The record gives the reactivity of an RNA of 177 nucleotides to 2A3 and DMS.
RNA sequence: GGGAACGACUCGAGUAGAGUCGAAAACGUAGUUCUUCAAUCACAUGACGCCUAGGGGAAAGUCCCCGGAUCUCGGGUAGAAAGUGCCGUGCGCUACUAUGGCGUGCAAUAAUCCCGCCCUGCUGUCAGCUUAGGGAGUGUUCGCACUCCCUAAGCUAAAAGAAACAACAACAACAAC
Reactivity to 2A3 in 0.01 (KOAc 150mM, MgCl2 10mM, bicine 150mM(pH8.5), 24C), signal-to-noise 2, nucleotides 027 to 126: c090g000u060a030g060u090u040c010u080u010c030a020a130u060c020a010c020a060u080g020a070c040g030c010c030u190a160g000g000g040g030a100a300a000g140u120c000c000c010c000g000g000a020u010c020u060c030g000g010g030u040a090g110a100a200a040g130u030g000c020c030g080u080g010c090g000c020u030a080c010u070a020u120g020g000c010g020u090g020c010a000a090u210a120a070u050c000c010c000g020c020c000c020u000g030c000u020g000u070c010
Reactivity to DMS in 0.01 (KOAc 150mM, MgCl2 10mM, bicine 150mM(pH8.5), 24C), signal-to-noise 2, nucleotides 027 to 126: c100g030u050a110g000u000u000c020u000u100c010a120a140u050c070a060c030a020u010g000a100c000g000c100c080u000a080g010g000g000g010a230a170a100g010u000c020c000c010c000g010g000a000u030c000u000c080g020g030g000u030a070g020a040a110a140g020u010g000c100c080g000u000g050c000g000c000u000a070c210u000a080u020g000g020c050g080u000g000c040a050a020u090a080a090u030c070c000c010g000c070c090c020u000g000c000u010g010u040c070
Annotation: The data come from the RNA Mapping Database (RMDB), library RFM100. Conditions: 150 mM KOAc, 10 mM MgCl2 and 150 mM bicine (pH 8.5), 24 C.